An RNA of 177 nucleotides, treated with 2A3 and DMS and read out base by base.
The reactions ran in a buffer of 150 mM KOAc, 10 mM MgCl2 and 150 mM bicine (pH 8.5), at 24 C.
RNA sequence: GGGAACGACUCGAGUAGAGUCGAAAAGAACUCACCUUCGGGUGAGUUCAAACCCGAUGAAGCGCCACUUAGACAGCUUCAUACACCUAAGAAGUGCAAUAAAAACAACGCGGUUCGCCGCGUUGAACGAUUGCUAAAACUUCGGUUUUAGCAAUCGAAAAGAAACAACAACAACAAC
Reactivity to 2A3 in 0.01 (KOAc 150mM, MgCl2 10mM, bicine 150mM(pH8.5), 24C), signal-to-noise 1, nucleotides 027 to 126: g000a000a000c000u000c000a020c000c000u040u070c190g060g000g020u000g000a000g000u000u010c000a000a000a000c000c000c010g000a090u060g000a000a010g000c030g040c070c020a100c090u100u030a020g030a130c060a040g030c020u040u010c000a000u040a010c070a000c010c010u040a060a070g130a110a020g070u040g100c170a080a140u150a170a180a020a030a040c000a000a000c010g010c000g000g040u010u030c200g010c030c000g000c000g010u000u000g000a000a000
Reactivity to DMS in 0.01 (KOAc 150mM, MgCl2 10mM, bicine 150mM(pH8.5), 24C), signal-to-noise 1, nucleotides 027 to 126: g000a010a000c000u000c000a000c010c010u000u000c180g000g000g050u000g000a010g000u000u010c040a060a110a210c000c000c000g030a050u000g000a000a030g010c000g000c020c030a120c300u000u020a130g020a040c090a120g040c000u030u000c000a010u000a150c010a010c050c020u000a220a050g010a170a100g060u000g010c300a070a020u000a030a040a130a070a090c000a000a000c010g010c000g000g000u000u010c220g020c000c000g020c010g000u000u000g000a060a070